[RMDB]
RNA sequence: GGGAACGACUCGAGUAGAGUCGAAAAUGUGUGGUACGACUAGGUACUACGUACCUAGCAUCUGUCACGCGGAUCAGUGGUACCUAGCGCGGUACAGUACUAGUAUCACAUGACACAGUACCGUAUAUAUCAGUGAACUGUUCGCAGUUCACUGAUAAAAAGAAACAACAACAACAAC
Reactivity to 2A3 in 0.01 (KOAc 150mM, MgCl2 10mM, bicine 150mM(pH8.5), 24C), signal-to-noise 3, nucleotides 027 to 126: u130g000u000g000u010g010g000u020a020c040g040a030c070u010a000g010g010u000a010c060u050a120c240g020u020a050c000c000u030a030g000c020a030u030c010u060g110u090c050a010c070g030c000g040g010a080u050c040a030g030u030g060g000u010a020c020c030u060a080g050c040g000c010g080g000u020a000c000a000g010u010a070c090u090a030g010u020a000u040c010a010c020a070u110g090a040c030a020c020a090g000u010a010c010c010g080u040a100u020a010
Reactivity to DMS in 0.01 (KOAc 150mM, MgCl2 10mM, bicine 150mM(pH8.5), 24C), signal-to-noise 4, nucleotides 027 to 126: u020g000u010g030u000g010g030u000a010c040g010a210c010u000a010g010g010u000a010c000u010a130c170g010u010a040c040c020u010a050g020c110a060u000c030u010g000u000c100a050c070g000c060g020g000a080u000c100a120g020u000g010g020u000a010c030c040u010a080g010c080g010c060g020g000u000a020c040a060g000u010a110c130u000a130g010u000a000u000c020a010c020a040u010g010a090c150a080c120a140g010u000a020c000c000g010u010a100u000a110